[RMDB]
RNA sequence: GGGAACGACUCGAGUAGAGUCGAAAAGUCUGCACUGUGCAGCAAUCUAGGAGAUGGUCAGAUGGCCCUGGCCCACACUUGGAGUCUCAGAUGUCCCCUGCUGGCUGCCCCAGAUGAUACCAUAGACUUCGGAGUCACUAAUUCAUAUUAUGAAAGAGAGCAUUUAAUCAUUCGUGAUUAAAUGCUCAAAAGAAACAACAACAACAAC
Reactivity to 2A3 in 0.01 (KOAc 150mM, MgCl2 10mM, bicine 150mM(pH8.5), 24C), signal-to-noise 2, nucleotides 027 to 156: g040u010c020u040g010c000a030c110u140g050u090g060c010a040g000c030a050a120u070c060u100a080g000g060a080g010a100u080g030g000u030c000a000g030a100u110g080g030c020c050c000u000g020g020c000c000c030a030c020a010c040u050u080g080g040a030g050u030c040u020c120a060g030a210u150g050u060c010c000c000c010u040g040c000u000g020g010c020u030g000c010c000c030c000a020g000a100u090g000a030u060a110c020c000a020u060a060g060a020c000u030u020c080g060g010a020g030u030c010a000c090u050a050a020u090u000c020a010u100a120u240u180a120u170g080a050a060a070g190a030
Reactivity to DMS in 0.01 (KOAc 150mM, MgCl2 10mM, bicine 150mM(pH8.5), 24C), signal-to-noise 1, nucleotides 027 to 156: g000u000c020u000g010c130a230c120u020g000u000g020c020a080g040c040a070a070u000c030u000a120g030g030a080g020a130u000g010g060u000c050a110g020a110u010g030g000c040c050c010u010g030g050c020c000c030a070c080a060c070u000u000g030g000a180g020u010c060u000c030a100g010a140u000g000u000c020c030c000c030u010g010c000u010g030g000c020u020g000c070c010c010c000a130g020a050u000g010a210u000a090c020c030a120u000a170g010a070c050u000u010c050g010g020a150g010u020c020a080c060u000a060a110u010u000c040a080u000a110u000u000a080u000g000a070a090a110g030a300